[RMDB]
RNA sequence: GGGAACGACUCGAGUAGAGUCGAAAAAGGCACUAGCGUGGCUUCUGAAGUGUCGGCAUCUGUGAGCGAGCAGAGCACAGUUUCAUUACCUCGUGAGAAGAUGUCUGUGUUCAUGGCCCGGUUGGCAGACUGCCCUAUUAUUCGUAAUAGGGCAGUCAAAAGAAACAACAACAACAAC
Reactivity to DMS in 0.01 (KOAc 150mM, MgCl2 10mM, bicine 150mM(pH8.5), 24C), signal-to-noise 5, nucleotides 027 to 126: a080g010g010c020a020c040u000a090g010c050g020u000g010g020c040u000u000c100u000g010a050a060g020u000g000u000c040g010g010c020a040u000c020u000g010u010g010a240g020c040g010a060g020c090a080g000a050g020c030a080c080a050g010u010u010u000c040a050u000u010a150c240c040u010c050g000u010g010a200g000a080a040g010a040u000g000u010c000u010g010u000g020u000u000c040a080u000g020g000c010c000c020g000g000u000u010g010g010c100a120
Reactivity to 2A3 in 0.01 (KOAc 150mM, MgCl2 10mM, bicine 150mM(pH8.5), 24C), signal-to-noise 3, nucleotides 027 to 126: a000g070g020c030a020c090u100a020g010c040g070u080g040g010c000u080u040c030u050g050a090a050g040u060g060u110c000g050g010c020a060u000c000u050g060u030g080a020g080c030g000a000g020c040a030g000a000g030c000a020c020a120g050u060u110u140c010a030u070u050a090c010c040u050c040g040u110g050a100g020a070a080g000a020u010g020u040c010u030g040u020g000u020u000c070a110u090g050g000c030c000c030g060g110u080u090g040g000c040a020